[RMDB]
RNA sequence: GGGAACGACUCGAGUAGAGUCGAAAAGGACGGUGUUUGCGUGAGUGCCAGCAAACCUACACUUGCGGUUGCCAAUCUCAGAUUUACGACCUAGGCGGCUAGGUCAGCGUGGUGGUAACAAUGUGCCAGAGAGUUUGCUGUUCGCAGCAAACUCUCUAAAAGAAACAACAACAACAAC
Reactivity to DMS in 0.01 (KOAc 150mM, MgCl2 10mM, bicine 150mM(pH8.5), 24C), signal-to-noise 1, nucleotides 027 to 126: g030g000a030c260g000g000u000g010u000u000u000g000c040g080u020g000a080g000u000g000c130c080a080g000c190a040a090a000c010c070u000a080c110a110c130u000u000g090c070g000g000u000u000g010c000c040a060a050u000c000u000c040a110g000a000u020u040u060a080c270g000a020c000c030u000a000g020g000c150g040g000c000u000a000g000g000u030c000a090g000c060g000u010g000g070u030g000g000u010a030a050c010a170a080u000g000u000g000c070c240
Reactivity to 2A3 in 0.01 (KOAc 150mM, MgCl2 10mM, bicine 150mM(pH8.5), 24C), signal-to-noise 1, nucleotides 027 to 126: g030g010a000c010g060g030u070g000u060u060u080g000c000g000u010g050a140g030u040g130c090c030a050g000c000a040a060a040c000c010u010a030c000a000c020u040u060g000c010g000g000u020u010g030c020c010a070a160u080c040u000c080a030g010a090u060u120u050a020c080g020a000c000c000u000a040g090g150c020g040g020c070u000a020g000g000u000c000a030g000c000g000u000g060g000u000g070g000u000a000a000c030a060a090u180g000u070g150c070c000
Structure probing data (DMS and 2A3) for a 177-nucleotide construct.
The RNA was probed in 150 mM KOAc, 10 mM MgCl2 and 150 mM bicine (pH 8.5) at 24 C.
2A3 adducts were read by reverse transcription with SuperScript II with manganese.
It was measured as part of the RMDB library OK1LIB.
The DMS profile rests on 1,327 reads.